[RMDB]
RNA sequence: GGGAACGACUCGAGUAGAGUCGAAAAAUCAGAGGGCGCUAUCAUGCAAAAUAGGAUUGUCUGCUCAUGCACAGAACCAACUACCGAUAACUAACAGUGCAUGAAGGUUAGUUAUUCCAUAUUAAUUAAAACUCGUAAUUCUUCGGAAUUACGAGAACAGAGUACUGACCUUCGGGUCAGUACUCUGAAAAGAAACAACAACAACAAC
Reactivity to 2A3 in 0.01 (KOAc 150mM, MgCl2 10mM, bicine 150mM(pH8.5), 24C), signal-to-noise 1, nucleotides 027 to 156: a000u070c010a000g000a000g030g050g000c070g000c000u030a070u120c030a050u200g000c010a070a050a050a100u070a080g080g000a170u070u160g010u050c030u060g000c000u000c000a060u010g000c000a000c000a040g110a210a100c060c000a080a060c020u140a190c030c100g040a050u010a080a000c000u000a010a010c000a020g040u010g080c000a010u010g020a000a000g000g000u000u000a000g000u030u040a020u020u110c010c010a060u140a030u300u230a120a140u080u090a020a210a050a050c000u000c000g010u000a000a000u010u000c020u060u020c140g030g000a000a000u000u000a020c000g000a000g000a000a010

The record gives the reactivity of an RNA of 207 nucleotides to 2A3. The RNA was probed in 150 mM KOAc, 10 mM MgCl2 and 150 mM bicine (pH 8.5) at 24 C. 2A3 adducts were read by reverse transcription with SuperScript II with manganese. The data come from the RNA Mapping Database (RMDB), library M2RFOK.